An RNA of 177 nucleotides, treated with DMS and 2A3 and read out base by base. DMS adducts were read by reverse transcription with MarathonRT. The RNA was probed in 150 mM KOAc, 10 mM MgCl2 and 150 mM bicine (pH 8.5) at 24 C. Values cover nucleotides 27 to 126. It was measured as part of the RMDB library OK2TRN.
RNA sequence: GGGAACGACUCGAGUAGAGUCGAAAAAGAAUGCCGGUAUGAGUAGCGCAAGAUAAGUGAGAAUCUUAUCCACCGUAAGACUAAGGUUUCCAGGGGAAGGCUCGUCCGCCCUGGGUUAGUCGGGACCGCCUUUAAUCUUGUUCGCAAGAUUAAAGGCAAAAGAAACAACAACAACAAC
Reactivity to DMS in 0.01 (KOAc 150mM, MgCl2 10mM, bicine 150mM(pH8.5), 24C), signal-to-noise 3, nucleotides 027 to 126: a050g020a110a070u010g020c080c030g010g030u000a050u010g010a120g010u010a070g010c060g020c120a120a160g000a020u000a020a040g030u020g010a170g000a190a130u010c010u010u000a010u010c040c100a130c120c020g000u010a080a110g010a050c020u020a030a060g010g000u000u010u010c000c000a030g000g000g000g000a100a100g000g010c070u010c300g000u000c000c020g010c000c000c000u000g000g010g000u000u000a030g000u000c010g000g000g000a140c110c140
Reactivity to 2A3 in 0.01 (KOAc 150mM, MgCl2 10mM, bicine 150mM(pH8.5), 24C), signal-to-noise 2, nucleotides 027 to 126: a000g100a080a040u070g000c030c030g040g030u150a080u140g110a080g060u090a010g060c000g000c080a040a080g000a020u030a000a020g030u010g040a070g030a050a030u070c000u010u000a010u000c010c020a050c020c000g090u090a130a000g030a020c010u020a020a030g140g020u080u220u050c000c000a010g000g000g010g060a300a190g040g000c050u060c140g120u060c000c000g250c000c000c000u000g010g030g020u000u010a000g010u010c000g010g000g020a040c010c040